[RMDB]
RNA sequence: GGGAACGACUCGAGUAGAGUCGAAAAUAGAGCACUGUAUUUUUCAUACAGCGAAAGGCACAAGACUUCGAACAUUAUAGCAGUUAGUAGUUGCCUAAACCCAUUGCAAUAUAUGGGACAGUAGAGGUAUAACGGCUUUAUUCGUAAAGCCGUUAUAAAAAGAAACAACAACAACAAC
Reactivity to 2A3 in 0.01 (KOAc 150mM, MgCl2 10mM, bicine 150mM(pH8.5), 24C), signal-to-noise 6, nucleotides 027 to 126: u180a010g070a000g040c040a020c070u000g030u010a050u010u180u030u110u130c050a020u010a010c000a000g010c020g080a140a060a030g020g000c010a010c030a050a090g030a050c020u020u050c060g100a170a060c030a170u170u250a150u240a120g050c090a020g010u020u060a010g020u020a030g000u110u050g020c020c000u060a100a060a060c000c000c000a000u000u010g000c000a000a000u010a000u000a000u160g010g000g020a010c010a010g100u120a030g020a030g090g050
Reactivity to DMS in 0.01 (KOAc 150mM, MgCl2 10mM, bicine 150mM(pH8.5), 24C), signal-to-noise 8, nucleotides 027 to 126: u020a100g010a160g020c050a170c010u000g010u010a000u010u010u040u020u020c160a060u010a010c030a020g000c080g000a060a090a060g000g010c000a060c060a150a130g020a040c050u010u000c060g000a070a090c150a090u030u020a090u020a140g000c120a070g020u010u000a060g010u020a040g000u010u000g000c020c000u010a020a080a110c010c000c000a000u000u000g000c180a120a110u030a100u030a010u000g010g000g000a080c180a050g000u020a090g010a110g000g000
Structure probing data (2A3 and DMS) for a 177-nucleotide construct. The data come from the RNA Mapping Database (RMDB), libraries RFM100 and RFMREP. Reactivities are given for positions 27 through 126. For DMS the reverse transcriptase was MarathonRT. The RNA was probed in 150 mM KOAc, 10 mM MgCl2 and 150 mM bicine (pH 8.5) at 24 C.